Chemical mapping of a 207-nucleotide RNA with 2A3. For 2A3 the reverse transcriptase was SuperScript II with manganese. The RNA was probed in 150 mM KOAc, 10 mM MgCl2 and 150 mM bicine (pH 8.5) at 24 C. The 2A3 profile rests on 523 reads. Source: RMDB library OK3TST, as collected in RNAgym.

RNA sequence: GGGAACGACUCGAGUAGAGUCGAAAACUAAGCUGAAAAAUCACCUACAAAAGUCAUGGCAAUAACUUAUUUACAGUUAAAAAAGAGAAUAUCAAGAUCUUGCUCUCAUAGUAAGGUAAACUAGACAUGUACACAAUCUUAUGAUGCCAAGAAACUGCUUCCUUCCAAACUUCGGUUUGGAAGGAAGAAAAGAAACAACAACAACAAC
Reactivity to 2A3 in 0.01 (KOAc 150mM, MgCl2 10mM, bicine 150mM(pH8.5), 24C), signal-to-noise 1, nucleotides 027 to 156: c010u040a090a000g080c030u060g110a010a000a000a050a050u070c020a030c040c000u140a080c080a050a120a060a010g010u000c010a080u050g070g000c080a030a080u040a110a020c010u090u140a050u280u110u050a140c050a010g000u100u080a100a060a060a060a000a000g050a030g000a110a030u120a040u160c040a030a050g000a080u030c020u010u000g010c000u040c000u000c040a030u180a050g010u010a000a040g010g000u040a090a000a000c020u010a030g020a090c000a030u090g180u180a060c020a000c000a110a060u020c000u040u070a050u140g050a030u080g000c000c010a020a070g040a040a090a040c030u010g010